[RMDB]
RNA sequence: GGGAACGACUCGAGUAGAGUCGAAAAGAUAUGGAUCGGGUUAGGGAGCGAGCAUGUCGGAAACGACAUGAAUCGCGAGGAUCUAGUCCGAUCCUAAGUCAAAAGGUGAAGUGUUCGCACUUCACCAGCCCAGUAUACUGUUCGCAGUAUACUGGGCAAAAGAAACAACAACAACAAC
Reactivity to 2A3 in 0.01 (KOAc 150mM, MgCl2 10mM, bicine 150mM(pH8.5), 24C), signal-to-noise 3, nucleotides 027 to 126: g010a020u030a030u080g000g000a000u000c010g010g010g020u030u000a020g040g050g030a300g060c000g010a000g040c010a000u010g000u000c000g020g020a040a020a010c000g000a010c000a000u030g010a050a250u050c000g010c010g010a080g010g050a020u000c000u000a000g000u010c000c020g000a000u020c000c000u000a000a000g000u000c010a030a000a040a250g000g000u000g000a000a020g010u010g070u160u300c300g060c160a000c010u000u010c000a000c000c000a000
Reactivity to DMS in 0.01 (KOAc 150mM, MgCl2 10mM, bicine 150mM(pH8.5), 24C), signal-to-noise 2, nucleotides 027 to 126: g000a040u010a220u020g000g010a020u000c010g000g000g010u000u000a000g000g020g000a050g020c000g040a000g010c000a000u010g000u000c000g010g010a020a060a150c000g010a000c000a010u000g000a130a070u000c010g010c000g010a130g000g000a040u000c000u000a000g000u020c000c000g010a000u000c000c000u000a000a090g000u000c020a070a100a170a120g010g020u010g000a020a000g010u000g010u000u000c300g020c000a000c000u000u000c010a000c000c000a010